[RMDB]
RNA sequence: GGGAACGACUCGAGUAGAGUCGAAAAAUAGGCUUAUCAAGAGAGGUGGAGGGACUGGCCCGAUGAAACCCGGCAGCCAGAAAUGGUGCCAAUUCCUGCAGCGGAAACGUUGUAAGAUGAGCCGAUGCGCCCAUGGCGUUCGCGCCAUGGAAAAGAAACAACAACAACAAC
Reactivity to 2A3 in 0.01 (KOAc 150mM, MgCl2 10mM, bicine 150mM(pH8.5), 24C), signal-to-noise 6, nucleotides 027 to 129: a010u160a030g000g000c000u010u010a010u030c070a140a020g030a000g000a030g060g010u030g010g030a020g010g010g010a040c060u090g170g120c010c000c000g110a180u030g020a010a010a020c010c000c000g000g000c020a060g180c000c000a000g020a010a030a020u050g000g000u010g000c000c000a000a010u070u040c000c010u030g020c010a000g000c000g010g010a040a020a020c020g000u000u010g010u020a060a040g000a020u000g010a000g000c010c010g020a040u150g050c060g060c020
Reactivity to DMS in 0.01 (KOAc 150mM, MgCl2 10mM, bicine 150mM(pH8.5), 24C), signal-to-noise 9, nucleotides 027 to 129: a060u060a020g000g000c030u010u010a030u040c050a100a090g010a030g020a160g040g050u030g000g000a050g010g070g000a260c160u050g020g040c030c000c000g030a070u000g030a080a120a040c050c050c000g020g050c060a050g060c020c020a040g000a090a050a110u020g000g000u030g020c020c000a020a040u020u040c070c070u000g020c020a030g030c000g040g020a080a010a100c060g000u020u030g020u000a020a070g020a030u030g020a020g030c030c020g000a100u120g020c120g030c110
Chemical mapping of a 170-nucleotide RNA with 2A3 and DMS. For 2A3, 44,665 sequencing reads were counted. The RNA was probed in 150 mM KOAc, 10 mM MgCl2 and 150 mM bicine (pH 8.5) at 24 C. For DMS the reverse transcriptase was MarathonRT. The DMS profile rests on 45,934 reads. It was measured as part of the RMDB library 15KLIB.